[RMDB]
RNA sequence: GGGAACGACUCGAGUAGAGUCGAAAAGCGGACAAGAAGUCGGAGAUCGAAGACGACUUCACGAUUUCCAACCGACGUCAGCACGGUCAGAAAGGAUGUAGGUCCGCAUGCAUCCAAGUUGACGAAAGGCAUGCAUGAACUUCGGUUCAUGCAUGCCAAAAGAAACAACAACAACAAC
Reactivity to 2A3 in 0.01 (KOAc 150mM, MgCl2 10mM, bicine 150mM(pH8.5), 24C), signal-to-noise 2, nucleotides 027 to 126: g000c020g000g000a010c000a010a050g000a000a000g000u000c000g000g090a120g000a070u100c150g130a080a020g100a140c000g000a020c000u000u000c000a010c050g000a050u040u000u000c000c000a000a000c000c000g040a040c050g000u000c000a000g010c000a000c010g000g040u050c020a050g300a090a000a000g000g020a000u000g000u000a000g000g040u030c000c000g000c000a030u030g000c040a000u000c000c000a030a000g000u000u000g000a010c080g000a080a050a010